Chemical mapping of a 177-nucleotide RNA with 2A3 and DMS. Reactivities are given for positions 27 through 126. Reactivities are rounded to 0.1 and cut off at 0 and 3. The 2A3 profile rests on 2,255 reads. The reactions ran in a buffer of 150 mM KOAc, 10 mM MgCl2 and 150 mM bicine (pH 8.5), at 24 C. 2A3 adducts were read by reverse transcription with SuperScript II with manganese.
RNA sequence: GGGAACGACUCGAGUAGAGUCGAAAAUUAACUAGCGUAGGGAACCAAGCAAAGAGGUAAGAAAUCCCACGGUAGAAGGCUUGGUUCGCGCCGGAGCAAGAAGAAGUCCCACUCCCUACGCCACAAAUCGUACAGAAAGUUUCGACUUUCUGUACGAAAAAGAAACAACAACAACAAC
Reactivity to 2A3 in 0.01 (KOAc 150mM, MgCl2 10mM, bicine 150mM(pH8.5), 24C), signal-to-noise 2, nucleotides 027 to 126: u080u030a080a100c110u050a040g010c000g000u010a000g010g000g020a030a010c010c000a040a000g000c000a040a080a130g090a060g080g050u120a100a070g090a180a130a070u080c010c010c030a020c000g060g030u050a060g030a140a000g060g000c000u000u020g000g000u060u000c030g000c000g010c020c050g100g060a070g000c080a010a040g070a090a000g050a050a000g060u030c000c020c000a020c010u010c000c000c000u000a000c000g010c000c000a020c020a020a100a020
Reactivity to DMS in 0.01 (KOAc 150mM, MgCl2 10mM, bicine 150mM(pH8.5), 24C), signal-to-noise 2, nucleotides 027 to 126: u000u010a080a090c140u000a070g020c010g020u000a010g010g020g010a010a100c020c000a030a050g010c050a080a080a060g020a080g030g040u000a020a050g000a050a090a170u000c000c000c000a090c080g020g010u000a070g000a140a060g010g000c020u000u000g000g000u000u000c050g000c080g000c070c070g000g000a060g020c080a060a080g010a090a070g010a050a060g000u010c020c000c020a150c050u000c010c000c010u010a020c010g000c000c160a050c190a020a050a110